[RMDB]
RNA sequence: GGGAACGACUCGAGUAGAGUCGAAAAGGACCCCACUCCUGCGAGACAGGAGUAAUCCUAAACAGGGUUUUCACCCUUCCUUUAGUUUCCUUCCUCUCCUGGAGAGGUCUUCUGCCCUAGCCCGGUCGAUGUACAAUAUCUUCGGAUAUUGUACAUCAAAAGAAACAACAACAACAAC
Reactivity to 2A3 in 0.01 (KOAc 150mM, MgCl2 10mM, bicine 150mM(pH8.5), 24C), signal-to-noise 6, nucleotides 027 to 126: g010g000a020c020c000c030c010a070c010u000c000c010u030g030c120g090a050g030a080c170a120g020g000a000g000u000a000a010u030c000c010u040a040a030a060c300a160g040g010g010u080u050u240u300c120a040c010c000c000u010u020c000c000u020u020u010a010g000u000u050u000c010c000u030u050c000c000u010c000u000c000c010u020g000g010a010g000a000g000g000u010c000u020u000c010u070g030c000c010c020u050a070g020c000c010c030g050g060u090c090
Reactivity to DMS in 0.01 (KOAc 150mM, MgCl2 10mM, bicine 150mM(pH8.5), 24C), signal-to-noise 7, nucleotides 027 to 126: g000g010a030c020c020c040c210a090c010u000c000c000u000g000c150g010a060g000a100c160a010g000g000a010g010u000a020a020u010c160c010u000a010a020a030c220a020g000g000g010u000u010u010u010c220a090c000c000c000u000u000c030c020u000u000u000a030g010u000u000u000c010c010u000u010c030c040u010c010u000c000c030u000g000g010a030g010a090g000g010u010c010u000u000c050u000g010c020c010c010u000a120g010c020c020c030g010g010u010c160

Source: RMDB library VIROID, as collected in RNAgym. Structure probing data (2A3 and DMS) for a 177-nucleotide construct.